[RMDB]
RNA sequence: GGGAACGACUCGAGUAGAGUCGAAAAUAUCACUUCGGUGAUAAACGGGGUCAUUAGAAAGUGAGGCUUAGACAUGCUCUGAAGCCUCCACGGAGCAACAGCUAAGCUACCCACCACUGCUAAUGACGGAGGCACCCAACCUACUCGUUCGCGAGUACUAGGCAUUAAAUUUCGAUUUAAUGCCUAGAAAAGAAACAACAACAACAAC
Reactivity to 2A3 in 0.01 (KOAc 150mM, MgCl2 10mM, bicine 150mM(pH8.5), 24C), signal-to-noise 8, nucleotides 027 to 156: u050a000u000c010a010c000u040u080c300g120g000u010g000a020u030a020a090a030c090g030g020g010g000u000c010a010u000u010a020g120a260a300a000g040u010g000a010g030g000c000u010u000a010g010a050c050a200u300g010c000u010c000u010g020a060a020g000c000c000u000c000c000a010c000g000g000a000g000c030a060a120c070a170g080c020u010a000a000g000c010u040a090c060c090c030a050c030c000a000c010u020g000c000u010a000a000u000g030a010c070g000g000a000g000g000c010a020c000c000c000a020a060c000c010u010a010c000u010c000g040u070u050c190g020c000g110a010g010u030a050
Reactivity to DMS in 0.01 (KOAc 150mM, MgCl2 10mM, bicine 150mM(pH8.5), 24C), signal-to-noise 2, nucleotides 027 to 156: u010a030u000c010a000c020u000u000c290g050g010u000g020a000u000a020a070a070c090g020g040g000g030u000c020a030u000u000a040g020a060a070a020g010u000g010a220g000g000c030u000u000a020g010a040c020a300u000g020c010u000c020u000g000a000a090g020c010c000u000c020c000a110c070g010g010a050g030c020a090a100c080a040g000c010u000a010a030g020c010u000a060c020c050c050a300c040c010a040c020u000g000c000u000a000a030u010g000a050c060g060g000a050g030g030c010a050c020c030c010a050a080c030c020u000a070c020u020c000g020u020u010c110g030c000g040a150g030u000a070